[RMDB]
The record gives the reactivity of an RNA of 207 nucleotides to 2A3. It was measured as part of the RMDB library M2RFPK. For 2A3 the reverse transcriptase was SuperScript II with manganese.
RNA sequence: GGGAACGACUCGAGUAGAGUCGAAAACCUAUCCAAAAUGAGAUCCCAUCUUGCACACUGUGCUAAUUUGAGAUUCUUAUGCCUCCUACUUGGAGAGAUCUGGACUAGAAGUCAGGGCAUCUGACUCAAUACAUUCGUCAGUUCGCUGACGAAUGAAUCACUUGUUGGUCUUCGGACCAACAAGUGAAAAAGAAACAACAACAACAAC
Reactivity to 2A3 in 0.01 (KOAc 150mM, MgCl2 10mM, bicine 150mM(pH8.5), 24C), signal-to-noise 2, nucleotides 027 to 156: c000c000u020a060u080c020c010a020a020a000a170u090g000a020g000a030u030c000c000c000a020u000c010u010u070g020c000a020c040a050c100u260g020u000g020c080u130a070a070u030u020u030g020a020g000a010u250u130c020u050u030a050u110g030c010c000u000c000c010u110a260c090u240u270g010g000a010g000a000g020a040u040c040u090g040g000a010c020u040a080g030a200a020g070u000c000a020g020g070g220c070a130u160c040u060g000a000c000u010c030a070a120u170a060c010a020u000u000c000g020u010c010a000g000u020u100c180g010c160u000g000a000c000g010a000a000u000g000a000a010